Chemical mapping of a 177-nucleotide RNA with 2A3. Conditions: 150 mM KOAc, 10 mM MgCl2 and 150 mM bicine (pH 8.5), 24 C. The 2A3 profile rests on 1,125 reads.
[RMDB]
RNA sequence: GGGAACGACUCGAGUAGAGUCGAAAAGGAACUAUGUUCAGGCAUGAAGCCUCCACGUGCGUGCGAAAGCACCCGGAAACGGCUGAGCAUAGUUCCGAGCUGAAGGAGGCACGGCUCAAAAUAAAAACAGUACCCACGUGUUCGCACGUGGGUACUGAAAAGAAACAACAACAACAAC
Reactivity to 2A3 in 0.01 (KOAc 150mM, MgCl2 10mM, bicine 150mM(pH8.5), 24C), signal-to-noise 1, nucleotides 027 to 126: g000g000a000a000c010u000a000u020g010u000u000c000a020g000g010c000a000u000g020a210a000g020c000c000u020c000c000a000c010g000u000g000c000g000u000g000c030g090a160a010a080g000c010a010c010c000c010g000g120a060a000a060c010g020g000c000u000g000a000g000c000a000u000a010g000u000u000c000c000g020a000g000c000u030g030a140a080g000g000a000g000g040c010a010c040g040g000c020u000c010a040a040a000a030u270a010a050a050a000a000